[RMDB]
About this RNA:
Structure probing data (2A3 and DMS) for a 177-nucleotide construct.

RNA sequence: GGGAACGACUCGAGUAGAGUCGAAAAUCGCGAAUGUCCCAACUCCAAUCCUUGAAGUUCGAUUUGAAGGUGCCAAGACCGAAGAAGAUGUUGCCCGGAGAAUCGCGCACAUCAGGAAAACGGGUCAAGCAUUUACCUACUUCGGUAGGUAAAUGCUAAAAGAAACAACAACAACAAC
Reactivity to 2A3 in 0.01 (KOAc 150mM, MgCl2 10mM, bicine 150mM(pH8.5), 24C), signal-to-noise 1, nucleotides 027 to 126: u080c030g020c030g190a080a050u140g020u090c030c000c000a000a020c030u020c080c000a030a080u060c000c050u040u260g020a060a030g030u050u040c030g000a040u050u010u020g030a020a000g010g070u070g100c060c060a040a010g110a040c000c090g060a120a060g100a080a020g040a110u080g010u130u090g000c030c030c010g020g020a040g020a050a010u040c010g010c020g000c000a040c000a070u080c030a020g020g000a000a040a000a040c030g020g000g020u070c030a020
Reactivity to DMS in 0.01 (KOAc 150mM, MgCl2 10mM, bicine 150mM(pH8.5), 24C), signal-to-noise 1, nucleotides 027 to 126: u000c080g010c100g010a060a060u010g010u000c000c000c000a160a100c080u000c000c080a060a210u000c000c030u010u000g110a040a090g050u000u000c010g010a020u020u000u030g000a300a150g000g020u030g000c090c090a000a060g030a010c030c020g000a090a070g010a060a150g000a020u000g000u000u000g020c000c000c000g010g010a300g000a030a030u010c010g030c180g020c030a030c010a130u000c030a010g000g000a010a030a070a110c300g050g010g010u000c110a070
For DMS, 728 sequencing reads were counted.